[RMDB]
RNA sequence: GGGAACGACUCGAGUAGAGUCGAAAAGUAAAUACUUUCGAGUAUUUACAAAGAACGCUGCAACGCGCAGCGCGCUCGCGAGAGCACGCCGCAGCAAAAUUAAAACUGCUGGAUUCGUCCAGCAGAACAUCCACGUAGUGUUCGCACUACGUGGAUGAAAAGAAACAACAACAACAAC
Reactivity to 2A3 in 0.01 (KOAc 150mM, MgCl2 10mM, bicine 150mM(pH8.5), 24C), signal-to-noise 1, nucleotides 027 to 126: g000u010a000a000a020u020a000c000u030u060u140c240g060a000g000u000a010u000u010u000a010c000a010a090a010g030a100a010c060g020c030u070g010c020a090a080c160g040c040g000c230a030g000c000g020c000g000c000u010c010g000c040g010a040g000a000g020c000a000c000g010c020c030g000c010a030g010c000a080a030a040a060u160u100a040a100a020a130c000u000g000c000u010g020g000a020u040u020c130g050u040c040c000a000g000c000a000g000a000a010
Reactivity to DMS in 0.01 (KOAc 150mM, MgCl2 10mM, bicine 150mM(pH8.5), 24C), signal-to-noise 1, nucleotides 027 to 126: g010u000a000a010a000u010a010c000u000u000u010c160g010a000g000u000a000u010u010u010a020c000a150a090a070g000a080a060c160g030c060u000g010c020a100a070c150g000c120g040c080a040g020c010g000c060g000c030u000c030g000c120g000a190g000a020g010c000a010c020g000c010c030g000c000a020g010c030a080a060a120a070u000u000a040a040a060a100c010u000g000c000u000g000g000a020u000u030c100g000u000c010c000a010g000c050a000g010a020a110